Structure probing data (DMS) for a 177-nucleotide construct. Source: RMDB library OK2TRN, as collected in RNAgym. The RNA was probed in 150 mM KOAc, 10 mM MgCl2 and 150 mM bicine (pH 8.5) at 24 C.
[RMDB]
RNA sequence: GGGAACGACUCGAGUAGAGUCGAAAACAGCAGAAGACUCCCAAGUUGGAGCUGUUGGGUGGAGCCAUGUACUACCUGGAAGCAGAGCAUCAUGGGAUAGCCCCAAGCAGGGGGAUGAGGAUUGGUGCCGGAGUGCAAUAUUCGUAUUGCACUCCGGAAAAGAAACAACAACAACAAC
Reactivity to DMS in 0.01 (KOAc 150mM, MgCl2 10mM, bicine 150mM(pH8.5), 24C), signal-to-noise 1, nucleotides 027 to 126: c110a020g000c040a060g000a300a130g020a080c070u020c120c110c150a090a140g020u000u000g040g000a300g000c010u000g010u010u010g000g020g040u020g000g000a170g020c040c020a050u000g010u020a070c060u000a120c130c020u020g010g040a120a070g010c070a030g000a060g000c050a050u010c050a030u000g000g010g010a150u010a180g010c020c000c000c040a040a090g030c130a040g010g010g010g010g010a030u000g000a090g000g000a080u000u000g000g020u000g020
DMS adducts were read by reverse transcription with MarathonRT.
For DMS, 765 sequencing reads were counted.